[RMDB]
RNA sequence: GGGAACGACUCGAGUAGAGUCGAAAAGAGACUUCUCUAACGAUGAAACAAAAAUGCCUUCGCAAAUGAAUUUAGCCGAAUCGUAGGAUGCCCAAUUAGUCCAUUUUUGGAGCGUCUGGAACCCUCGUGUUUAAGGCGAGUUCGCUCGCCUUAAACAAAAAGAAACAACAACAACAAC
Reactivity to DMS in 0.01 (KOAc 150mM, MgCl2 10mM, bicine 150mM(pH8.5), 24C), signal-to-noise 2, nucleotides 027 to 126: g030a100g000a040c060u000u000c000u000c000u020a080a060c020g050a100u000g000a110a110a040c040a000a020a050a120a120u010g000c000c020u000u020c040g040c090a070a130a090u000g010a060a040u030u040u000a080g000c040c010g000a080a030u020c030g020u000a050g000g010a010u000g000c000c040c010a060a010u000u010a070g030u000c110c020a030u010u000u000u010u000g000g020a050g010c300g000u000c010u000g020g000a000a100c030c000c000u000c120g010
Reactivity to 2A3 in 0.01 (KOAc 150mM, MgCl2 10mM, bicine 150mM(pH8.5), 24C), signal-to-noise 3, nucleotides 027 to 126: g070a010g030a030c030u070u020c010u050c020u030a060a020c040g010a020u040g030a180a030a050c080a060a070a010a020a040u050g040c000c010u050u030c040g000c080a110a050a110u130g030a030a130u090u140u180a030g010c040c010g040a020a030u050c020g000u010a020g000g040a010u040g010c000c010c000a010a040u050u080a040g070u100c050c020a070u000u000u010u010u080g040g000a080g010c010g010u000c020u040g060g050a030a040c000c000c010u080c050g030
This 177-nucleotide RNA was probed chemically with DMS and 2A3. Reactivities are given for positions 27 through 126. 2A3 adducts were read by reverse transcription with SuperScript II with manganese.